[RMDB]
RNA sequence: GGGAACGACUCGAGUAGAGUCGAAAAUGGAGCAUCGCGAUAGCUUCGAGUUCAAAGGGUAUAUACGGAACCGGCAGUGCCUCAGUAGGGCGCUGCCAUGGCUAUAAUCGAUGUACCCGCAGUCAAAAGGCAUUUUAAUCUUCGGAUUAAAAUGCCUAAAAGAAACAACAACAACAAC
Reactivity to DMS in 0.01 (KOAc 150mM, MgCl2 10mM, bicine 150mM(pH8.5), 24C), signal-to-noise 1, nucleotides 027 to 126: u000g000g020a150g020c010a000u000c090g020c300g020a130u000a090g000c020u000u000c070g020a100g000u010u000c080a090a030a130g000g010g010u000a030u010a030u020a080c020g020g030a050a160c040c030g000g000c010a010g040u000g000c010c010u000c030a120g020u000a160g000g030g000c000g000c000u000g000c000c020a010u010g000g000c090u020a160u000a070a090u030c010g000a060u000g020u010a020c000c000c000g000c250a080g010u000c180a020a030a080
Conditions: 150 mM KOAc, 10 mM MgCl2 and 150 mM bicine (pH 8.5), 24 C. Chemical mapping of a 177-nucleotide RNA with DMS. For DMS, 912 sequencing reads were counted. It was measured as part of the RMDB library OK2TST.